[RMDB]
RNA sequence: GGGAACGACUCGAGUAGAGUCGAAAAGGACGAGCGUUACAUAAAACGCAUACCUAACUAAUGAAGAAUUUGAAACUGUACAAUGUGAAUGACGAAAGGGUGGAUACGAAAUGGCUUCUAAAACAAAGUGAUAGAAGCAGUUCGCUGCUUCUAUCACAAAAGAAACAACAACAACAAC
Reactivity to 2A3 in 0.01 (KOAc 150mM, MgCl2 10mM, bicine 150mM(pH8.5), 24C), signal-to-noise 3, nucleotides 027 to 126: g040g020a060c040g050a050g050c000g000u040u090a070c050a170u300a150a210a000a000c000g000c000a040u070a010c010c000u000a100a160c000u100a110a030u110g070a040a120g020a100a140u120u030u130g040a060a010a020c010u040g020u120a040c040a140a120u070g020u070g110a160a070u120g000a010c010g090a080a010a040g080g000g000u020g010g130a040u060a050c050g010a020a040a050u130g050g000c010u050u040c030u050a010a010a000a080c090a010a050a000
Reactivity to DMS in 0.01 (KOAc 150mM, MgCl2 10mM, bicine 150mM(pH8.5), 24C), signal-to-noise 3, nucleotides 027 to 126: g010g030a120c150g000a090g010c020g010u000u000a050c150a160u080a060a040a010a010c020g040c010a160u020a120c000c010u000a110a180c080u000a070a100u000g010a080a060g010a090a050u000u000u000g010a150a060a060c030u000g000u010a130c090a020a110u000g000u000g000a080a080u020g000a040c070g020a070a050a010g000g000g020u000g000g000a050u010a070c140g020a030a080a110u000g000g000c070u000u000c040u020a030a050a000a030c200a040a070a110
The data come from the RNA Mapping Database (RMDB), libraries RFM100 and RFMREP. Chemical mapping of a 177-nucleotide RNA with 2A3 and DMS. For 2A3 the reverse transcriptase was SuperScript II with manganese. For DMS the reverse transcriptase was MarathonRT.